[RMDB]
RNA sequence: GGGAACGACUCGAGUAGAGUCGAAAAGAUAUGGAGGUGUCACAAUCAGCGAUGAAAUCGGAAACGAUGGAGCUGAUUGUGAGCACCUCCUAAGUCAAAGAUAUAAGUCCUUCGGGACUUAUAUCAACUAAGGUCAAAGGUUCGCCUUUGACCUUAGAAAAGAAACAACAACAACAAC
Reactivity to 2A3 in 0.01 (KOAc 150mM, MgCl2 10mM, bicine 150mM(pH8.5), 24C), signal-to-noise 1, nucleotides 027 to 126: g030a010u050a050u170g010g000a000g000g030u040g060u080c000a010c000a040a020u000c000a010g000c010g230a300u040g030a060a000a000u020c000g010g070a070a090a050c020g000a000u020g000g040a010g000c000u000g000a000u000u000g000u000g010a010g000c000a000c000c000u030c000c000u010a000a000g010u020c030a110a050a070g000a000u000a000u000a000a010g000u000c010c000u040u120c300g090g000g000a000c000u000u010a010u010a000u010c000a000a000
Reactivity to DMS in 0.01 (KOAc 150mM, MgCl2 10mM, bicine 150mM(pH8.5), 24C), signal-to-noise 3, nucleotides 027 to 126: g000a060u000a300u000g010g030a010g020g020u000g000u000c000a010c000a010a010u000c000a010g000c000g000a120u010g000a080a100a010u000c000g000g000a130a100a200c000g000a020u000g000g010a080g010c000u010g000a000u000u010g010u000g000a050g010c010a010c000c010u000c000c000u000a000a050g000u010c050a090a150a150g010a010u000a000u000a000a000g010u000c000c000u020u010c190g010g010g010a010c000u000u000a000u000a000u010c000a070a190